RNA sequence: GGGAACGACUCGAGUAGAGUCGAAAAAUCGCUUCAUCUCCGGUGCGUCUGCCCCGGUGACCGGCCCAGCCGCCGCGGUCAGGACCCCGCAGCCGGAUCCCGACGCUUCGCUGGGGUGUGGCGACGGCGUAUAUGAGUCGUUCGCGACUCAUAUACGAAAAGAAACAACAACAACAAC
Reactivity to DMS in 0.01 (KOAc 150mM, MgCl2 10mM, bicine 150mM(pH8.5), 24C), signal-to-noise 4, nucleotides 027 to 126: a120u000c050g010c030u010u000c070a070u000c050u000c010c010g020g000u000g000c010g020u000c050u000g030c120c030c010c010g020g020u000g010a040c160c080g010g010c040c030c040a180g020c070c130g020c110c050g030c100g030g000u000c030a070g010g010a070c040c060c010c050g030c120a180g010c080c060g010g010a030u010c040c040c050g000a060c030g030c110u000u000c050g010c040u000g000g000g030g020u000g010u000g010g010c010g000a040c060g000g020
Reactivity to 2A3 in 0.01 (KOAc 150mM, MgCl2 10mM, bicine 150mM(pH8.5), 24C), signal-to-noise 2, nucleotides 027 to 126: a000u030c020g020c040u100u110c030a100u040c050u010c030c020g100g020u110g050c000g030u040c030u060g000c020c030c000c000g010g000u010g010a030c040c000g030g020c060c030c030a040g030c030c030g030c090c060g080c040g050g000u070c060a130g080g000a090c050c050c010c010g060c050a010g050c070c030g000g070a060u030c000c020c000g010a010c020g010c100u110u100c060g050c110u050g010g000g050g010u040g040u050g020g000c010g000a010c010g050g000